[RMDB]
RNA sequence: GGGAACGACUCGAGUAGAGUCGAAAAAGAUCAGAUGAGAUGUCUUAAAAGUGAGAGCUAUGGAACCCCACUUUAAGAUGACAUUUUAAGAUCCAAAGGCCAAAGAUAUUCUAGAACAAGGAAUCAUGCCUUGUUCCAUGGGUUCUUGUCAGCUCCAUCGUAAUGGCCCUUUCGAGGGCCAUUACGAAAAAGAAACAACAACAACAAC
Reactivity to 2A3 in 0.01 (KOAc 150mM, MgCl2 10mM, bicine 150mM(pH8.5), 24C), signal-to-noise 1, nucleotides 027 to 156: a000g000a000u000c000a000g010a050u000g000a000g040a010u040g000u010c020u070u100a060a060a000a000g000u030g020a250g010a040g060c050u090a120u300g070g050a080a070c000c000c020c000a000c000u000u070u000a140a080g040a120u050g010a010c010a050u000u040u040u060a030a010g000a020u010c010c010a040a030a010g020g030c020c020a050a100a000g070a040u130a040u050u140c090u080a020g000a020a000c000a030a010g060g000a060a170u270c040a130u290g140c000c030u000u000g000u030u030c030c000a100u130g000g010g000u010u050c010u060u000g080u060c040a010g040c010u050c050c010a020
The record gives the reactivity of an RNA of 207 nucleotides to 2A3. The RNA was probed in 150 mM KOAc, 10 mM MgCl2 and 150 mM bicine (pH 8.5) at 24 C. 2A3 adducts were read by reverse transcription with SuperScript II with manganese. The 2A3 profile rests on 428 reads. Values are in units of 0.01, from 0 to 300, in steps of 10.